RNA sequence: GGGAACGACUCGAGUAGAGUCGAAAAGCCCCCGUCUUCGGACGGGGGCAAUUAACGGUCGGCGCAUGCAGCUAGUCGAAAAUGCUGCUCGACCUUUUGCUAAAAUACGACCCUUCGGGGUCGUAAACAGAAUAAGACGUUUCGACGUCUUAUUCUGAAAAGAAACAACAACAACAAC
Reactivity to DMS in 0.01 (KOAc 150mM, MgCl2 10mM, bicine 150mM(pH8.5), 24C), signal-to-noise 2, nucleotides 027 to 126: g020c010c000c020c000c010g030u000c000u000u010c240g040g010a010c000g030g010g040g010g040c010a020a010u010u000a070a080c160g010g010u000c010g020g020c120g020c060a050u000g020c080a130g010c030u000a140g020u010c100g000a050a070a100a040u010g000c000u000g000c020u000c020g000a000c000c000u000u000u000u000g000c080u000a060a080a110a150u000a040c010g000a020c000c000c000u000u010c130g020g020g010g000u000c000g010u000a000a040a110
Reactivity to 2A3 in 0.01 (KOAc 150mM, MgCl2 10mM, bicine 150mM(pH8.5), 24C), signal-to-noise 1, nucleotides 027 to 126: g020c010c000c010c050c040g000u100c050u060u090c240g110g010a010c010g000g000g100g020g060c010a000a000u030u000a050a010c040g000g000u000c000g070g000c100g010c100a010u130g000c000a010g010c030u110a030g300u220c110g050a110a050a010a120u060g000c030u000g010c010u000c020g010a000c030c000u000u010u010u040g010c010u070a120a040a000a000u030a050c010g010a010c000c000c000u000u070c170g060g000g000g040u000c010g000u000a000a000a010